[RMDB]
RNA sequence: GGGAACGACUCGAGUAGAGUCGAAAAGAUAUGGAUAGUAGGGAGCAGUCGUCGGAAACGACGAUACUGCUUUGAUCUACGUCCUAAGUCGAGCCGCAUAUGGUACGUUCGCGUACCAUAUGCGGAAGGUACAUAUUUCCUUCGGGAAAUAUGUACCAAAAGAAACAACAACAACAAC
Reactivity to 2A3 in 0.01 (KOAc 150mM, MgCl2 10mM, bicine 150mM(pH8.5), 24C), signal-to-noise 2, nucleotides 027 to 126: g010a010u030a010u070g000g000a020u110a300g030u020a010g010g000g010a020g000c000a000g000u010c010g010u000c010g000g020a050a010a000c010g000a000c020g000a020u070a030c010u010g000c000u270u060u010g010a010u000c010u000a010c000g020u010c000c000u010a050a000g020u010c030g020a030g050c000c000g000c000a000u000a010u000g010g000u000a010c000g020u030u080c300g000c000g170u010a000c000c000a000u000a000u010g000c000g000g000a010a010
Reactivity to DMS in 0.01 (KOAc 150mM, MgCl2 10mM, bicine 150mM(pH8.5), 24C), signal-to-noise 3, nucleotides 027 to 126: g000a020u000a230u010g010g000a000u000a100g030u000a010g010g010g000a000g020c000a000g010u000c010g000u010c000g010g010a040a040a100c000g000a010c010g010a090u000a020c010u000g000c000u000u000u000g000a090u010c000u000a000c020g000u000c000c000u000a010a110g010u000c010g000a180g000c020c000g000c000a020u000a000u000g000g010u000a000c000g010u000u010c230g020c000g020u000a000c000c000a010u000a000u000g000c000g000g010a000a000
Structure probing data (2A3 and DMS) for a 177-nucleotide construct. The DMS profile rests on 5,812 reads. 2A3 adducts were read by reverse transcription with SuperScript II with manganese.